Record summary: The record gives the reactivity of an RNA of 177 nucleotides to DMS. It was measured as part of the RMDB library TTRINS. The RNA was probed in 150 mM KOAc, 10 mM MgCl2 and 150 mM bicine (pH 8.5) at 24 C.
[RMDB]
RNA sequence: GGGAACGACUCGAGUAGAGUCGAAAAGAUAUGGAGCCUUGCGGGCCAUCGAUCACUGAAAUUGUGGAGUCACUCGGAAACGAGUGAGCUCCACAAUUUCAGUGGGAGGCUACAAGGCUCCUAAGUCCAAUGUAAUGGGGUUCGCCCCAUUACAUUGAAAAGAAACAACAACAACAAC
Reactivity to DMS in 0.01 (KOAc 150mM, MgCl2 10mM, bicine 150mM(pH8.5), 24C), signal-to-noise 3, nucleotides 027 to 126: g010a110u000a300u010g020g000a020g010c000c000u000u000g010c050g020g030g000c000c010a210u000c220g010a090u010c000a000c000u010g000a000a000a000u000u000g020u010g020g010a010g020u000c000a010c000u010c000g000g010a150a150a280c010g000a020g000u010g000a060g020c000u010c010c000a000c000a010a000u000u000u000c010a010g020u000g010g000g010a030g030g020c000u000a090c020a000a010g000g000c010u000c000c000u000a000a080g000u000c050
For DMS the reverse transcriptase was MarathonRT.
Reactivities are rounded to 0.1 and cut off at 0 and 3.
For DMS, 4,439 sequencing reads were counted.